Overview:
An RNA of 177 nucleotides, treated with 2A3 and DMS and read out base by base. 2A3 adducts were read by reverse transcription with SuperScript II with manganese. The RNA was probed in 150 mM KOAc, 10 mM MgCl2 and 150 mM bicine (pH 8.5) at 24 C. For DMS the reverse transcriptase was MarathonRT. Values cover nucleotides 27 to 126. As a SHAPE reagent, 2A3 marks flexible, mostly unpaired nucleotides at the ribose 2'-OH.
RNA sequence: GGGAACGACUCGAGUAGAGUCGAAAAGAUAUGGACAUUGUAUGCUCGAAGAACCGUAACAUCGGUCGGAAACGACCGUGGGGGAGAGCGAAGAUGUCCUAAGUCAAAACCGUAGUUCGCUACGGAAGUCAUGAUGAUUGUUCGCAAUCAUCAUGACAAAAGAAACAACAACAACAAC
Reactivity to 2A3 in 0.01 (KOAc 150mM, MgCl2 10mM, bicine 150mM(pH8.5), 24C), signal-to-noise 4, nucleotides 027 to 126: g010a010u050a040u110g000g010a020c010a010u060u160g110u240a070u300g000c010u020c000g270a300a070g000a060a030c030c030g050u170a070a020c050a240u230c020g010g010u000c010g000g000a100a090a040c020g000a000c000c000g000u020g000g010g010g000g000a070g010a010g010c000g000a040a010g010a000u000g000u000c000c010u000a050a010g040u040c020a010a030a070a120c010c000g010u000a000g020u030u100c300g000c150u010a000c010g010g040a010a020
Reactivity to DMS in 0.01 (KOAc 150mM, MgCl2 10mM, bicine 150mM(pH8.5), 24C), signal-to-noise 4, nucleotides 027 to 126: g010a020u000a300u010g020g030a020c010a010u010u000g010u000a290u010g010c010u010c000g000a100a100g000a160a230c040c030g000u000a050a100c220a040u030c010g020g010u000c010g020g000a070a100a160c010g000a020c000c010g020u000g010g000g010g010g020a090g010a010g000c020g010a170a300g020a010u000g010u000c010c000u010a030a110g010u000c040a090a090a060a150c000c000g010u000a000g030u010u010c190g030c000u000a000c020g000g010a020a060